[RMDB]
Record summary:
The record gives the reactivity of an RNA of 177 nucleotides to DMS and 2A3. The 2A3 profile rests on 603 reads. For 2A3 the reverse transcriptase was SuperScript II with manganese. The data come from the RNA Mapping Database (RMDB), library RFM100. Values cover nucleotides 27 to 126.
RNA sequence: GGGAACGACUCGAGUAGAGUCGAAAAGUGAAGCUACUAACCCAGGGCUCGGCCGGGACUGUUGUGGCGUGUGACAAGGUGCCUGGCCUUCUGCCAACCGACUAACCCACUAACCAGGCCCGAGCAUUAUAUGUCGAUCGUUCGCGAUCGACAUAUAAAAAGAAACAACAACAACAAC
Reactivity to DMS in 0.01 (KOAc 150mM, MgCl2 10mM, bicine 150mM(pH8.5), 24C), signal-to-noise 2, nucleotides 027 to 126: g020u010g030a110a150g000c040u070a060c070u000a130a070c030c010c020a130g000g020g000c000u000c160g030g000c020c040g010g000g000a040c140u000g010u000u020g070u040g000g000c200g000u000g000u000g000a160c070a040a140g000g000u000g000c230c080u020g000g010c000c190u060u000c110u010g050c020c010a120a060c070c040g000a160c110u000a080a200c090c000c000a030c060u010a070a100c090c010a060g010g000c050c000c080g000a140g150c060a160u050
Reactivity to 2A3 in 0.01 (KOAc 150mM, MgCl2 10mM, bicine 150mM(pH8.5), 24C), signal-to-noise 2, nucleotides 027 to 126: g040u140g100a100a000g030c090u130a080c040u030a060a080c000c000c010a040g090g030g000c010u000c020g000g000c010c000g000g000g110a120c140u110g110u250u050g040u020g050g060c080g040u160g040u070g060a080c050a280a100g000g010u160g090c050c050u050g010g010c000c000u010u050c050u110g000c000c000a060a050c050c000g000a010c000u050a030a040c000c000c000a020c040u040a080a000c040c000a050g000g040c020c090c000g020a000g000c020a000u000